Chemical mapping of a 177-nucleotide RNA with DMS and 2A3. For DMS the reverse transcriptase was MarathonRT. For 2A3 the reverse transcriptase was SuperScript II with manganese.
[RMDB]
RNA sequence: GGGAACGACUCGAGUAGAGUCGAAAACUCAAGGCCUUCGGGCCUUGAGAAAAGGGAUCGUAUCUUUGCUUCGAAGCCAAACAUGAAACAUGAAAGCAGAGAAAAGUUUUGGGUUCGCCCAAAACAACUACCUAACGUACUUCGGUACGUUAGGUAGAAAAGAAACAACAACAACAAC
Reactivity to DMS in 0.01 (KOAc 150mM, MgCl2 10mM, bicine 150mM(pH8.5), 24C), signal-to-noise 2, nucleotides 027 to 126: c000u000c000a000a000g010g020c000c010u020u010c180g030g000g010c000c000u000u000g000a010g000a020a030a120a070g000g000g020a110u000c060g010u000a090u010c000u000u000u000g000c010u000u000c040g010a070a070g030c010c050a040a070a140c080a050u000g010a090a090a060c160a040u000g000a040a060a060g000c020a010g000a020g010a080a090a060a140g000u010u000u000u000g000g010g000u000u000c290g000c000c000c000a000a000a010a010c000a100a180
Reactivity to 2A3 in 0.01 (KOAc 150mM, MgCl2 10mM, bicine 150mM(pH8.5), 24C), signal-to-noise 2, nucleotides 027 to 126: c000u000c000a000a010g040g020c000c020u110u180c300g030g040g000c040c000u020u020g000a000g000a000a030a020a000g110g000g010a080u090c050g030u100a050u020c010u000u000u030g000c000u010u040c000g120a110a040g040c030c030a100a130a060c050a110u200g100a180a140a000c050a030u110g100a140a030a020g000c020a000g000a010g000a060a030a060a050g010u020u010u010u010g040g000g000u020u100c200g100c000c000c030a000a010a010a000c000a000a010
The reactions ran in a buffer of 150 mM KOAc, 10 mM MgCl2 and 150 mM bicine (pH 8.5), at 24 C. It was measured as part of the RMDB library M2PK50.